Source: RMDB library M2PK50, as collected in RNAgym.
An RNA of 177 nucleotides, treated with 2A3 and DMS and read out base by base.
RNA sequence: GGGAACGACUCGAGUAGAGUCGAAAAGUUCAUGUGUUCGCACAUGAACAAAAGACGGAGAGAAAUGCACCAUGGACUCAACCGUCGAAAACCAAAGGUGCAAAAGUGGGGGGUUCGCCCCCCACAAGUAAUAGAGUUCCUUCGGGAACUCUAUUACAAAAGAAACAACAACAACAAC
Reactivity to 2A3 in 0.01 (KOAc 150mM, MgCl2 10mM, bicine 150mM(pH8.5), 24C), signal-to-noise 1, nucleotides 027 to 126: g000u010u010c000a000u020g010u000g020u010u060c140g020c070a000c000a000u000g000a000a000c000a000a000a000a020g000a010c000g030g000a050g000a010g000a030a100a150u100g000c000a000c000c010a070u120g080g070a110c020u020c050a120a230c080c000g020u020c000g020a050a070a000a010c030c010a070a050a050g010g000u020g000c000a040a000a030a100g010u020g000g000g000g010g010g010u010u050c090g070c000c000c000c000c000c000a000c000a000a000
Reactivity to DMS in 0.01 (KOAc 150mM, MgCl2 10mM, bicine 150mM(pH8.5), 24C), signal-to-noise 1, nucleotides 027 to 126: g000u010u010c000a000u000g000u000g020u000u050c150g070c000a020c000a000u000g010a000a000c000a060a060a140a150g010a010c000g000g050a300g020a080g000a080a170a140u000g030c010a000c000c000a140u000g010g020a180c050u000c000a070a100c000c000g020u000c020g010a060a090a070a140c020c020a060a100a210g030g030u000g000c000a070a050a140a090g040u000g020g010g010g010g010g010u000u000c270g010c010c000c000c010c000c010a000c010a010a040

DMS adducts were read by reverse transcription with MarathonRT.
The reactions ran in a buffer of 150 mM KOAc, 10 mM MgCl2 and 150 mM bicine (pH 8.5), at 24 C.